RNA sequence: GGGAACGACUCGAGUAGAGUCGAAAAAGGCAAUCUUGCUACUAAUCACGAUCGUUAUUGCUCUGUCCAUCAAGGAGCUCAUGUGGCUUCUAAUGAUGCAAUAAUGACUCGUUGUUUAGCUAUUCAUCGGCGGUCCCGUUCGCGGGACCGAAAAGAAACAACAACAACAAC
Reactivity to DMS in 0.01 (KOAc 150mM, MgCl2 10mM, bicine 150mM(pH8.5), 24C), signal-to-noise 1, nucleotides 027 to 129: a170g000g000c070a030a150u060c100u090u020g010c030u050a180c080u120a030a030u040c020a000c020g000a050u010c030g020u000u000a000u000u000g000c020u030c100u020g010u100c190c040a050u000c000a100a050g000g050a000g050c000u000c060a010u100g060u050g000g030c030u010u010c030u020a130a020u020g060a110u060g020c030a030a000u010a030a030u000g010a020c170u000c020g010u000u000g020u000u000u270a020g020c250u000a030u040u000c080a090u020c070g020g030
Reactivity to 2A3 in 0.01 (KOAc 150mM, MgCl2 10mM, bicine 150mM(pH8.5), 24C), signal-to-noise 5, nucleotides 027 to 129: a000g110g000c050a050a060u080c100u110u230g010c010u000a040c020u010a020a020u050c000a000c020g020a000u010c010g000u000u030a000u000u000g000c030u040c060u150g140u060c020c050a030u080c030a060a060g000g000a020g000c000u000c030a170u270g160u270g000g000c000u000u010c000u010a050a080u070g040a020u110g000c000a000a030u000a000a010u000g010a020c140u000c010g010u010u120g000u020u000u000a010g000c010u060a120u070u060c030a060u030c040g080g000

Notes: This 170-nucleotide RNA was probed chemically with DMS and 2A3. High 2A3 reactivity points to a flexible backbone, as in loops and unpaired stretches. 2A3 adducts were read by reverse transcription with SuperScript II with manganese. The reactions ran in a buffer of 150 mM KOAc, 10 mM MgCl2 and 150 mM bicine (pH 8.5), at 24 C. For 2A3, 7,028 sequencing reads were counted.